[RMDB]
RNA sequence: GGGAACGACUCGAGUAGAGUCGAAAAUAUUGAAAGAAAGAAUAUUCCGAAAGAUCGUUGCUACGGUAACCUUCUGUCAGGAAUACCCGAAUCAUGAGAACUCUGUUUCGAAAGGAUUUGCGGUAGAGACGUCCAAAGUAUUCGUACUUUGGACGUCAAAAGAAACAACAACAACAAC
Reactivity to DMS in 0.01 (KOAc 150mM, MgCl2 10mM, bicine 150mM(pH8.5), 24C), signal-to-noise 5, nucleotides 027 to 126: u030a080u020u020g010a100a090a110g000a090a060a090g020a080a140u010a060u000u000c000c000g010a080a130a010g000a010u000c180g000u000u000g000c000u010a070c160g030g000u000a010a000c000c020u000u000c000u000g000u010c190a250g000g000a030a010u000a020c000c000c000g010a010a010u010c000a020u000g000a300g000a000a020c000u050c160u030g020u020u000u010c000g000a140a070a060g000g000a010u000u000u000g010c160g000g000u000a070g010a160
Reactivity to 2A3 in 0.01 (KOAc 150mM, MgCl2 10mM, bicine 150mM(pH8.5), 24C), signal-to-noise 5, nucleotides 027 to 126: u200a080u090u160g070a060a080a050g100a060a100a000g110a110a020u070a060u060u000c010c010g020a090a020a000g010a000u010c010g000u010u020g000c010u010a040c220g080g000u010a010a010c000c000u000u000c000u010g100u120c090a020g020g010a010a010u000a020c010c000c000g000a000a000u010c010a020u040g010a010g000a050a000c030u110c160u300g130u160u030u000c020g030a080a000a020g030g000a000u000u010u030g080c100g000g010u100a030g020a010
This 177-nucleotide RNA was probed chemically with DMS and 2A3.
DMS adducts were read by reverse transcription with MarathonRT.
In probing experiments dimethyl sulfate is read out at A N1 and C N3, which are open when not base-paired.
Values cover nucleotides 27 to 126.
Conditions: 150 mM KOAc, 10 mM MgCl2 and 150 mM bicine (pH 8.5), 24 C.